[RMDB]
RNA sequence: GGGAACGACUCGAGUAGAGUCGAAAAGAUAUGGAUUCCAGACAUGUCCCGAGUCGGAAACGACUUUGGGACAACAGCUGGAUCCUAAGUCAAAACACAAUAUAGGACUUCGGUCCUAUAUUGUGAACACUGGAAUCUUGUUCGCAAGAUUCCAGUGAAAAGAAACAACAACAACAAC
Reactivity to 2A3 in 0.01 (KOAc 150mM, MgCl2 10mM, bicine 150mM(pH8.5), 24C), signal-to-noise 2, nucleotides 027 to 126: g030a000u040a070u120g040g000a040u300u150c000c000a000g020a060c120a210u120g000u010c010c000c000g000a010g010u010c000g010g060a030a050a060c010g040a020c000u090u170u300g000g000g000a010c000a000a000c000a020g020c000u000g000g000a000u000c000c000u000a100a030g060u040c020a000a000a190a150c000a000c010a020a000u000a010u000a000g010g000a010c000u030u060c300g030g000u000c010c010u020a000u000a010u000u000g000u000g000a000a000
Reactivity to DMS in 0.01 (KOAc 150mM, MgCl2 10mM, bicine 150mM(pH8.5), 24C), signal-to-noise 2, nucleotides 027 to 126: g000a030u000a300u010g000g000a010u000u020c000c010a010g000a030c110a170u000g010u000c000c000c010g020a000g000u000c000g010g000a080a100a220c000g020a000c000u000u000u000g100g000g000a010c000a000a030c220a170g000c010u000g000g000a030u010c000c010u010a060a070g010u010c030a100a110a060a180c010a010c000a000a010u000a000u000a000g000g000a010c000u000u000c150g030g010u000c000c000u000a000u000a000u000u000g030u000g000a040a130